[RMDB]
The record gives the reactivity of an RNA of 207 nucleotides to 2A3. The RNA was probed in 150 mM KOAc, 10 mM MgCl2 and 150 mM bicine (pH 8.5) at 24 C. It was measured as part of the RMDB library RNAMAK. For 2A3, 1,580 sequencing reads were counted.
RNA sequence: GGGAACGACUCGAGUAGAGUCGAAAAGCGUACUACUGCGAGGCAGCGGGAGGCUCUAAGAAGCUCUAUCCCAAAUAGGAUAGAGCCACUAGAGCCAUCGAUCGCUGCUCCCCACCGCAGUAUCGCAAACCCCGAUCCAUCUUCGGAUGGAUCGGGGGCAUGUCUGAACCUUCGGGUUCAGACAUGCAAAAGAAACAACAACAACAAC
Reactivity to 2A3 in 0.01 (KOAc 150mM, MgCl2 10mM, bicine 150mM(pH8.5), 24C), signal-to-noise 2, nucleotides 027 to 156: g010c000g050u100a090c060u000a000c000u040g000c000g010a010g000g000c000a000g000c010g000g030g000a030g020g010c000u000c000u020a110a160g110a150a010g000c000u000c000u010a000u000c010c040c020a230a260a200u300a050g000g000a010u000a000g010a000g010c020c000a020c020u000a010g000a000g000c010c020a040u040c000g050a010u090c010g000c000u000g000c000u020c010c000c010c000a030c030c000g000c000a010g000u000a040u300c040g000c000a100a030a160c000c020c020c000g010a000u020c000c000a000u000c010u030u100c220g160g000a000u000g030g000a000u000c000g000g000g010g000